[RMDB]
RNA sequence: GGGAACGACUCGAGUAGAGUCGAAAAAAGUCACCCUCCUCGCAUCGCAAGUUCGUGCUUUCGACUUACACGUAGGGCGAGGGGUGGGCGAAAGUUGCCAUGAGACCGUAACUUUCGUAGUCAUUGAAAAACUACAAAGCCUUCGGGCUUUGUAGAACUGAUCAUACGACUUCGGUCGUAUGAUCAGAAAAGAAACAACAACAACAAC
Reactivity to 2A3 in 0.01 (KOAc 150mM, MgCl2 10mM, bicine 150mM(pH8.5), 24C), signal-to-noise 2, nucleotides 027 to 156: a000a000g140u090c070a070c030c010c000u030c000c010u010c010g020c020a160u080c030g030c120a030a010g110u250u100c040g040u070g110c070u160u210u130c020g020a040c010u040u080a040c070a010c060g130u090a130g060g090g000c010g000a000g010g000g010g010u140g000g030g000c000g000a000a000a000g010u010u000g010c040c050a060u140g070a060g010a300c030c030g000u000a000a000c000u000u000u010c010g000u020a050g120u070c050a100u040u100g050a030a050a000a000a020c000u000a000c000a000a010a000g020c010c000u060u060c230g040g010g000c000u000u030u020g000u000a000g000a010a010
Annotation: Chemical mapping of a 207-nucleotide RNA with 2A3. The RNA was probed in 150 mM KOAc, 10 mM MgCl2 and 150 mM bicine (pH 8.5) at 24 C.